[RMDB]
RNA sequence: GGGAACGACUCGAGUAGAGUCGAAAAAGCGUAGACACUGUCGGCGACAGCGAACUCGCGACACUGCUACCGCACAUCGAGAAAACCUUCGGUUUUCCCACGUGGGCACAAAUCAACGAAGCACUCGCACCGAUGUAUUAUUCGUAAUACAUCGGUGAAAAGAAACAACAACAACAAC
Reactivity to 2A3 in 0.01 (KOAc 150mM, MgCl2 10mM, bicine 150mM(pH8.5), 24C), signal-to-noise 8, nucleotides 027 to 126: a000g030c020g010u020a000g050a090c010a010c040u030g020u040c060g170g170c020g020a020c030a040g120c040g080a070a040c020u010c020g010c010g020a000c010a000c020u020g000c000u020a020c040c080g010c010a070c010a100u100c030g020a010g020a060a100a060a100c010c000u060u050c020g050g000u020u040u040u020c010c020c000a040c050g050u130g010g030g000c080a020c050a070a100a040u140c030a040a100c040g050a040a010g030c020a020c050u010c020g000
Reactivity to DMS in 0.01 (KOAc 150mM, MgCl2 10mM, bicine 150mM(pH8.5), 24C), signal-to-noise 8, nucleotides 027 to 126: a090g010c040g010u000a020g010a160c040a020c090u000g010u000c010g020g040c020g020a030c160a090g020c110g000a060a080c100u000c020g010c010g010a040c040a030c080u000g000c010u000a040c060c060g020c030a080c110a080u010c070g000a030g000a060a030a050a080c100c030u000u010c070g020g010u000u000u000u000c010c010c000a120c170g020u000g000g000g010c100a050c110a040a070a080u010c100a060a070c060g000a050a070g020c130a090c050u000c060g000
Source: RMDB library OK2TST, as collected in RNAgym. Structure probing data (2A3 and DMS) for a 177-nucleotide construct. The 2A3 profile rests on 18,724 reads. For DMS, 11,551 sequencing reads were counted. The reactions ran in a buffer of 150 mM KOAc, 10 mM MgCl2 and 150 mM bicine (pH 8.5), at 24 C.